Overview
An RNA of 177 nucleotides, treated with 2A3 and DMS and read out base by base. For DMS, 1,921 sequencing reads were counted. The data come from the RNA Mapping Database (RMDB), library OK1LIB. The reactions ran in a buffer of 150 mM KOAc, 10 mM MgCl2 and 150 mM bicine (pH 8.5), at 24 C. For 2A3, 1,733 sequencing reads were counted.

RNA sequence: GGGAACGACUCGAGUAGAGUCGAAAAGGGAGAUCCGAGCAGAGGCAUAGCGAACUGCGCACGGCGAAGCCUUGAGGGAAGGCCGUAGGACCCGGGUUCGAUUCCCGGCGGCUCCACCGAAGGGCCACGGUAGGUGGUCCUUCGGGACCACCUACCGAAAAGAAACAACAACAACAAC
Reactivity to 2A3 in 0.01 (KOAc 150mM, MgCl2 10mM, bicine 150mM(pH8.5), 24C), signal-to-noise 3, nucleotides 027 to 126: g030g030g000a090g010a060u050c010c020g030a030g010c050a020g000a080g110g040c070a110u170a080g060c040g090a160a040c020u030g010c040g040c070a040c050g050g000c060g060a040a000g010c000c020u010u040g010a030g040g030g020a090a040g040g000c030c000g000u020a040g070g230a150c020c010c000g000g000g000u030u120c060g010a060u110u000c010c000c000g020g000c000g000g000c010u020c020c110a060c000c010g000a010a020g020g000g000c020c020a030
Reactivity to DMS in 0.01 (KOAc 150mM, MgCl2 10mM, bicine 150mM(pH8.5), 24C), signal-to-noise 2, nucleotides 027 to 126: g020g020g000a050g000a100u010c030c030g020a170g010c040a000g020a070g000g000c050a110u020a140g060c080g020a070a040c090u000g000c030g020c180a030c050g000g000c120g060a090a150g010c000c000u000u000g000a250g030g010g000a150a300g000g070c030c020g010u020a130g010g010a090c260c000c000g020g000g000u000u050c150g000a300u030u020c000c030c050g040g000c000g000g000c050u010c070c050a300c000c060g050a200a050g010g000g000c000c040a000